[RMDB]
RNA sequence: GGGAACGACUCGAGUAGAGUCGAAAACGUGGGCCGACAACAUUCGCGAUCUCGCCGACGCGCUGAAAGAGGCCGGUGUCGCGGCCGUCGGGGCGAACGGGAAGAUCGACUUCACCACCAAGGCGGGUUCGGAACUUCAGGACGCGGUCCAGAAGCACUAAUCAGCGAUGUUCGCAUCGCUGAUUAGAAAAGAAACAACAACAACAAC
Reactivity to 2A3 in 0.01 (KOAc 150mM, MgCl2 10mM, bicine 150mM(pH8.5), 24C), signal-to-noise 1, nucleotides 027 to 156: c090g040u050g000g000g010c020c010g080a160c030a090a030c040a050u060u010c080g010c000g300a050u000c000u000c020g000c000c000g020a050c050g020c000g010c010u100g070a200a140a030g130a270g050g000c000c000g010g000u210g030u100c100g000c020g090g000c010c000g010u000c000g000g000g020g000c040g040a130a090c120g000g010g010a000a010g030a090u060c060g020a070c070u040u000c020a190c160c030a070c060c010a060a040g000g000c010g000g000g000u000u010c030g000g040a020a070c020u260u140c090a080g030g040a030c100g010c000g030g010u000c000c000a000g020a030a030g000c080a040